[RMDB]
RNA sequence: GGGAACGACUCGAGUAGAGUCGAAAAGGUCCUUUUGUUGCGGAUCAUUUAUUGAAAAAAAUUGAAAAUUUAAAUGCACAAGGACAAAAAAAAGUAAUAACUACUUGGUCCCGUUCUUCUACGAUCCCUUCUCUAAGCAAUUCGUUGCUUAGAGAAGAAAAGAAACAACAACAACAAC
Reactivity to DMS in 0.01 (KOAc 150mM, MgCl2 10mM, bicine 150mM(pH8.5), 24C), signal-to-noise 2, nucleotides 027 to 126: g010g000u000c010c010u010u010u010u010g010u000u000g000c060g010g010a150u000c010a040u000u000u010a030u020u010g010a010a000a060a120a040a060a040u010u010g000a060a030a090a120u010u010u010a060a090a110u000g010c010a000c020a030a000g000g000a040c010a000a000a010a120a050a130a070a010g000u000a030a110u000a090a070c270u000a010c000u000u000g030g020u000c010c030c000g000u000u000c010u000u010c080u000a120c070g000a070u000c050c040
Reactivity to 2A3 in 0.01 (KOAc 150mM, MgCl2 10mM, bicine 150mM(pH8.5), 24C), signal-to-noise 1, nucleotides 027 to 126: g000g000u000c010c000u000u070u070u130g130u030u160g020c020g040g050a050u010c010a010u040u130u250a120u060u130g080a020a100a020a060a080a100a080u090u060g070a150a210a080a130u090u220u200a050a220a110u160g000c010a010c000a080a000g000g090a000c000a000a010a000a000a000a000a300a000g090u160a030a180u140a240a040c040u020a000c010u020u000g040g040u030c000c020c020g040u020u020c020u040u040c010u020a070c010g140a090u060c020c000
The record gives the reactivity of an RNA of 177 nucleotides to DMS and 2A3. Conditions: 150 mM KOAc, 10 mM MgCl2 and 150 mM bicine (pH 8.5), 24 C. DMS adducts were read by reverse transcription with MarathonRT. 2A3 is a SHAPE reagent: it acylates the 2'-hydroxyl of flexible nucleotides of all four kinds. Values cover nucleotides 27 to 126. The data come from the RNA Mapping Database (RMDB), library OK2TST.